[RMDB]
RNA sequence: GGGAACGACUCGAGUAGAGUCGAAAACACCACCACCAUUUACUUGAGUCUCAGAAGAUGUGAUGAGGGGGAGAUGAGCAGGAGGGAGAUGGUGCUCUGGGUGGAGGGAACAGCAUGAGCAAAAGCAUAAGUCGUGUAUUUUCGAAUACACGACUUAAAAAGAAACAACAACAACAAC
Reactivity to DMS in 0.01 (KOAc 150mM, MgCl2 10mM, bicine 150mM(pH8.5), 24C), signal-to-noise 2, nucleotides 027 to 126: c150a160c020c030a100c050c030a050c030c040a090u020u000u000a070c070u010u000g050a140g000u000c010u000c050a050g010a080a090g000a130u010g020u000g000a080u010g010a090g010g010g000g000g020a130g020a070u030g020a120g020c070a150g020g000a100g000g010g000a070g010a070u020g010g010u010g000c050u000c060u000g000g000g020u000g000g010a140g000g000g000a090a070c140a060g000c050a060u000g010a040g000c070a030a050a060a120g020c130a120
Reactivity to 2A3 in 0.01 (KOAc 150mM, MgCl2 10mM, bicine 150mM(pH8.5), 24C), signal-to-noise 2, nucleotides 027 to 126: c040a000c030c050a050c060c020a000c000c000a090u000u150u230a140c000u020u070g000a030g090u000c020u040c100a090g030a160a060g130a250u110g050u130g120a180u090g000a150g030g040g060g000g000a150g030a050u200g030a040g010c050a000g000g130a080g050g080g000a100g040a000u100g030g090u100g000c020u000c020u040g000g060g000u020g030g040a190g000g000g010a030a000c030a030g090c030a010u090g020a030g070c000a020a070a210a000g050c020a100
Notes: This 177-nucleotide RNA was probed chemically with DMS and 2A3. Conditions: 150 mM KOAc, 10 mM MgCl2 and 150 mM bicine (pH 8.5), 24 C. The 2A3 profile rests on 1,186 reads.